The record gives the reactivity of an RNA of 177 nucleotides to DMS and 2A3. Source: RMDB library OK2TRN, as collected in RNAgym. Conditions: 150 mM KOAc, 10 mM MgCl2 and 150 mM bicine (pH 8.5), 24 C. 2A3 adducts were read by reverse transcription with SuperScript II with manganese. DMS adducts were read by reverse transcription with MarathonRT.
RNA sequence: GGGAACGACUCGAGUAGAGUCGAAAAGGAAAGGUAGAACCAACAAAUCGGAGAAGGGAACCUGGCCAACUGGUGAUAUAAAGCAAUUACUAUUUUUACGAUGGGAUGCAAUCGGAUUUGUGUUAGCCUAUCCCUCGUGAUUCGUCACGAGGGAUAGAAAAGAAACAACAACAACAAC
Reactivity to DMS in 0.01 (KOAc 150mM, MgCl2 10mM, bicine 150mM(pH8.5), 24C), signal-to-noise 3, nucleotides 027 to 126: g010g000a070a070a050g020g000u000a080g010a050a150c030c040a110a080c080a060a070a080u010c040g000g010a040g000a070a110g000g000g000a100a070c060c030u010g000g020c070c070a040a090c100u000g000g000u000g020a060u020a110u000a070a100a070g000c090a050a060u010u010a080c050u010a080u000u020u010u020u020a090c170g020a050u000g010g000g020a080u000g010c060a070a040u000c070g000g020a060u000u000u010g000u000g010u000u010a110g030c180
Reactivity to 2A3 in 0.01 (KOAc 150mM, MgCl2 10mM, bicine 150mM(pH8.5), 24C), signal-to-noise 2, nucleotides 027 to 126: g040g010a110a050a030g030g030u090a080g010a160a040c010c030a030a050c010a040a130a010u100c070g020g020a070g010a130a050g020g000g050a030a030c010c000u040g110g000c030c010a050a080c090u020g010g010u060g010a010u010a000u050a190a180a010g000c000a050a000u050u010a120c040u050a060u030u160u020u130u250a040c060g000a020u080g050g000g000a020u040g050c000a020a120u050c040g060g040a030u000u000u070g060u040g010u060u090a040g030c000